Conditions: 150 mM KOAc, 10 mM MgCl2 and 150 mM bicine (pH 8.5), 24 C. An RNA of 177 nucleotides, treated with DMS and 2A3 and read out base by base. For 2A3, 4,497 sequencing reads were counted. The DMS profile rests on 10,433 reads. Reactivities are given for positions 27 through 126.
[RMDB]
RNA sequence: GGGAACGACUCGAGUAGAGUCGAAAAUUCGCGAUCGCGUUCGGCUUCAUGUUCGCGAUCGAGCGCACGAAGAACAGCUCGGCCGGCGUGUUCGUGCUGCUCGGCUUCACGUUCUUCAUGGGCCUGAAAUUUUAAUGCCUUUCGAGGCAUUAAAAUUAAAAGAAACAACAACAACAAC
Reactivity to DMS in 0.01 (KOAc 150mM, MgCl2 10mM, bicine 150mM(pH8.5), 24C), signal-to-noise 5, nucleotides 027 to 126: u000u000c030g010c010g010a020u000c020g020c010g010u000u000c010g010g010c200u010u020c210a090u010g010u000u000c010g020c000g000a000u000c010g000a020g020c020g010c010a030c050g000a020a020g000a030a030c010a110g030c130u010c210g010g000c010c020g010g000c010g010u000g010u000u010c200g010u010g010c010u010g020c010u010c020g010g000c020u000u010c140a120c060g000u000u000c010u000u000c010a070u000g000g000g010c020c060u000g000a050
Reactivity to 2A3 in 0.01 (KOAc 150mM, MgCl2 10mM, bicine 150mM(pH8.5), 24C), signal-to-noise 3, nucleotides 027 to 126: u080u020c020g000c010g030a020u000c010g000c040g020u030u010c030g060g060c140u230u150c090a080u200g010u000u010c010g020c000g010a000u000c000g000a010g010c050g040c000a020c030g010a000a010g010a050a020c010a030g030c040u080c130g030g000c010c000g020g000c050g010u060g080u150u160c100g050u130g030c040u080g000c070u090c050g000g000c000u070u050c060a030c050g000u010u010c000u040u000c010a010u030g000g120g010c000c030u050g070a070